[RMDB]
RNA sequence: GGGAACGACUCGAGUAGAGUCGAAAAAUGGCGAAUGCAUGGGGAACUACAUCUGUGUCGCGAGUUCGAUUCUCGCCAGGGCCUGGUCCUGUAGCUCAGUUGGUAGAGCAAGCUCUUCCCCGGACACAAAAUCCAGCUAGGUUCGCCUAGCUGGAAACCAAAUGGAACUCUUCGGAGUUCCAUUUGGAAAAGAAACAACAACAACAAC
Reactivity to 2A3 in 0.01 (KOAc 150mM, MgCl2 10mM, bicine 150mM(pH8.5), 24C), signal-to-noise 1, nucleotides 027 to 156: a010u120g070g000c040g090a150a050u120g040c060a080u090g010g030g000g000a030a030c010u130a040c070a110u110c000u020g040u040g040u090c040g020c010g010a010g000u060u040c030g010a070u080u000c010u020c010g000c000c000a020g010g030g040c070c200u170g090g050u020c000c020u020g000u020a010g030c010u000c010a040g030u110u150g160g020u070a020g000a000g000c030a030a010g030c020u030c010u050u010c030c010c010c000g010g040a060c070a010c020a090a070a000a020u030c010c000a000g010c000u000a000g010g040u030u010c110g050c000c000u000a000g000c000u000g000g000a000a000a020
Reactivity to DMS in 0.01 (KOAc 150mM, MgCl2 10mM, bicine 150mM(pH8.5), 24C), signal-to-noise 1, nucleotides 027 to 156: a170u010g020g000c060g000a060a000u000g000c000a080u000g010g050g000g000a050a050c060u020a050c010a030u000c030u020g040u000g030u000c070g110c000g020a000g020u000u000c080g000a300u000u000c000u000c000g050c030c060a080g000g060g020c000c140u000g020g000u000c040c050u010g010u000a020g000c020u000c020a160g000u000u000g010g070u000a010g000a120g070c040a110a110g010c090u000c000u000u000c020c000c010c050g060g000a110c110a030c080a090a080a140a110u000c000c010a030g000c000u000a020g000g000u010u010c220g060c010c010u000a020g020c000u020g030g000a000a010a030

An RNA of 207 nucleotides, treated with 2A3 and DMS and read out base by base. For DMS the reverse transcriptase was MarathonRT.